The record gives the reactivity of an RNA of 177 nucleotides to DMS and 2A3. For 2A3, 1,768 sequencing reads were counted. For DMS, 2,037 sequencing reads were counted. High DMS reactivity at an A or C suggests that its Watson-Crick edge is free.
[RMDB]
RNA sequence: GGGAACGACUCGAGUAGAGUCGAAAAGCUAAGAAUAACACGCCGGAAACUGAACUUCGGGAGUCCCUCCCGUCUCAUUGCCAGUGCCGUCACUGCCCCAGACAUGGGAUUCAAAAGGAGGGCGUGGCCAGCGAUAAUGAUUCGUCAUUAUCGCUGGAAAAGAAACAACAACAACAAC
Reactivity to DMS in 0.01 (KOAc 150mM, MgCl2 10mM, bicine 150mM(pH8.5), 24C), signal-to-noise 3, nucleotides 027 to 126: g010c110u010a100a150g020a130a080u010a090a150c020a030c020g030c020c000g030g010a110a170a140c090u000g000a100a140c070u000u000c010g010g010g000a050g000u000c030c020c010u000c030c020c030g000u000c040u010c040a050u020u000g000c060c030a040g020u000g010c100c090g000u010c060a050c060u000g000c170c010c030c020a070g000a100c240a060u010g010g020g010a100u010u000c100a060a040a080a080g000g000a170g010g010g010c020g030u000g010g000
Reactivity to 2A3 in 0.01 (KOAc 150mM, MgCl2 10mM, bicine 150mM(pH8.5), 24C), signal-to-noise 2, nucleotides 027 to 126: g050c030u070a100a000g030a250a210u140a190a000c010a010c050g000c010c000g090g090a140a180a030c040u100g060a080a030c030u060u050c070g080g030g030a020g100u070c030c000c000u030c000c000c010g000u010c020u020c000a120u100u110g000c010c030a020g000u010g070c090c110g140u160c010a020c030u050g020c000c020c000c020a010g020a010c000a060u050g000g000g060a020u130u110c100a060a130a030a040g040g000a060g000g050g000c000g000u010g000g070